[RMDB]
RNA sequence: GGGAACGACUCGAGUAGAGUCGAAAAGAUGGAUUACAAACUUGCUGAUCUACAGAGGGAAAUGUUCUGUCUCCAAACAUUGGAUCGGAUCAGACUACAACAAGUAGUAACAUUAAACGACUUACAGGUCUCCCCAAGGGUUCGCCCUUGGGGAGACAAAAGAAACAACAACAACAAC
Reactivity to 2A3 in 0.01 (KOAc 150mM, MgCl2 10mM, bicine 150mM(pH8.5), 24C), signal-to-noise 2, nucleotides 027 to 126: g040a020u140g070g000a010u010u130a060c000a070a240a070c000u000u030g000c020u010g000a000u000c020u020a140c060a130g100a040g030g060g140a030a140a140u160g010u000u010c030u020g150u040c000u080c020c000a060a170a160c060a060u000u000g090g020a040u180c040g030g000a000u000c000a000g050a050c120u300a030c130a280a000c000a000a000g000u040a000g000u000a000a000c000a000u020u080a000a180a040c030g030a020c020u070u120a000c000a030g050
The data come from the RNA Mapping Database (RMDB), library OK1LIB.
An RNA of 177 nucleotides, treated with 2A3 and read out base by base.
For 2A3 the reverse transcriptase was SuperScript II with manganese.
Values cover nucleotides 27 to 126.
The reactions ran in a buffer of 150 mM KOAc, 10 mM MgCl2 and 150 mM bicine (pH 8.5), at 24 C.